[RMDB]
RNA sequence: GGGAACGACUCGAGUAGAGUCGAAAAUUAGUAGAGGUAGAAUUAUGAUUGUUCUUGUGAGUUUCAGUAAGAGGUGGGAGUGAUUGGAAUUUGGCUCCAUCAGAUCAUGUUGCAGCUUCACUCUCUCUUUGAGGUAAACUUUCGAGUUUACCUCAAAAAAAGAAACAACAACAACAAC
Reactivity to DMS in 0.01 (KOAc 150mM, MgCl2 10mM, bicine 150mM(pH8.5), 24C), signal-to-noise 4, nucleotides 027 to 126: u020u020a050g010u000a070g010a020g010g000u010a030g000a100a070u020u010a050u020g000a110u000u010g010u000u000c150u000u020g000u010g000a090g010u000u000u000c030a060g010u010a090a080g010a040g020g000u020g050g000g000a030g010u010g000a050u040u000g020g010a050a070u010u000u010g000g010c020u000c100c070a080u010c080a050g010a080u020c060a050u000g020u010u000g020c100a040g020c130u020u010c020a040c040u000c020u010c030u010c050
Reactivity to 2A3 in 0.01 (KOAc 150mM, MgCl2 10mM, bicine 150mM(pH8.5), 24C), signal-to-noise 4, nucleotides 027 to 126: u190u080a020g090u050a010g000a040g060g000u050a030g080a240a090u180u100a140u280g170a150u010u070g020u030u020c040u050u040g030u030g110a170g050u020u030u000c040a030g030u100a130a030g010a040g120g050u120g070g000g000a010g010u020g010a050u050u120g040g070a070a110u130u020u120g030g000c020u060c070c010a030u050c030a020g080a100u080c020a020u140g010u020u020g010c010a010g020c020u030u020c000a020c010u000c000u000c000u020c050